RNA sequence: GGGAACGACUCGAGUAGAGUCGAAAAACUAGGAUGCUAUUCAGGCACAGGGCCUCAACAGGCUAGAGUUGGGCUGGCCUAGAAGGGUACAAUGGAAUCCUAUAAGCAUUGGUGAACAAGCUACGGCCUCUAAGCAAGUGUUCGCACUUGCUUAGAGAAAAGAAACAACAACAACAAC
Reactivity to DMS in 0.01 (KOAc 150mM, MgCl2 10mM, bicine 150mM(pH8.5), 24C), signal-to-noise 3, nucleotides 027 to 126: a130c080u000a020g000g000a110u000g000c010u000a140u010u000c130a070g010g030c060a120c100a130g010g010g000c000c010u020c020a060a090c090a040g000g020c070u000a080g010a120g010u000u020g010g000g010c010u000g010g000c000c000u000a060g000a120a090g000g000g020u010a050c090a050a040u030g010g000a070a070u000c020c010u000a070u000a060a090g010c040a050u010u010g000g000u000g020a120a080c100a110a100g010c050u000a080c080g020g020c060
Reactivity to 2A3 in 0.01 (KOAc 150mM, MgCl2 10mM, bicine 150mM(pH8.5), 24C), signal-to-noise 2, nucleotides 027 to 126: a000c020u040a060g010g050a050u030g030c030u080a060u140u140c100a040g040g000c000a010c060a200g030g000g140c050c010u100c020a030a020c020a030g150g000c000u060a060g010a020g120u070u070g010g030g000c030u040g020g000c010c010u040a060g050a060a020g010g000g000u070a020c060a060a100u110g030g050a040a020u010c010c020u070a050u050a140a010g010c040a090u060u050g040g020u070g060a130a060c050a090a030g030c040u070a030c090g090g000c000
An RNA of 177 nucleotides, treated with DMS and 2A3 and read out base by base. Reactivities are given for positions 27 through 126. It was measured as part of the RMDB library OK2TRN.